RNA sequence: GGGAACGACUCGAGUAGAGUCGAAAAGAUAUGGAUCUGCUACCCACCUUCGGGUGCACGAAGAACUAUCAUCGGAAACGAUGAUAGGGAGUGCACUCGAAGAGGCAGAUCCUAAGUCAAAUCCCAUUGCAAAGUAUUCGUACUUUGCAAUGGGAAAUGUACAUUGUUUCUUCGGAAACAAUGUACAAAAAGAAACAACAACAACAAC
Reactivity to 2A3 in 0.01 (KOAc 150mM, MgCl2 10mM, bicine 150mM(pH8.5), 24C), signal-to-noise 2, nucleotides 027 to 156: g060a020u080a040u090g000g000a000u000c010u000g000c010u050a190c040c050c050a040c010c000u000u000c010g010g020g000u000g000c000a000c000g300a300a030g000a010a000c000u000a000u000c010a000u000c000g020g010a010a010a010c010g010a000u010g010a010u000a000g000g000g000a010g000u010g000c000a000c000u000c000g000a000a000g000a000g000g010c000a000g000a000u000c000c000u000a010a000g040u030c050a020a040a230u000c000c000c000a010u000u000g020c000a000a000a010g000u010a030u040u160c270g040u100a010c000u000u000u000g000c000a000a000u000g000g000g000a030a020a000
Reactivity to DMS in 0.01 (KOAc 150mM, MgCl2 10mM, bicine 150mM(pH8.5), 24C), signal-to-noise 1, nucleotides 027 to 156: g000a100u010a100u010g000g000a000u000c000u000g030c010u000a080c010c000c050a300c080c020u000u000c010g040g000g010u010g000c020a010c020g050a160a090g000a080a300c000u000a000u000c000a000u050c010g000g000a080a050a250c000g030a020u000g000a020u000a010g000g020g010a150g020u040g000c030a000c000u000c050g000a000a010g000a080g020g000c000a020g010a000u010c000c010u000a000a060g000u000c020a150a210a180u000c000c000c000a000u000u000g010c000a000a000a050g030u010a050u000u000c240g010u000a010c000u030u000u000g010c000a010a000u020g010g000g010a000a000a000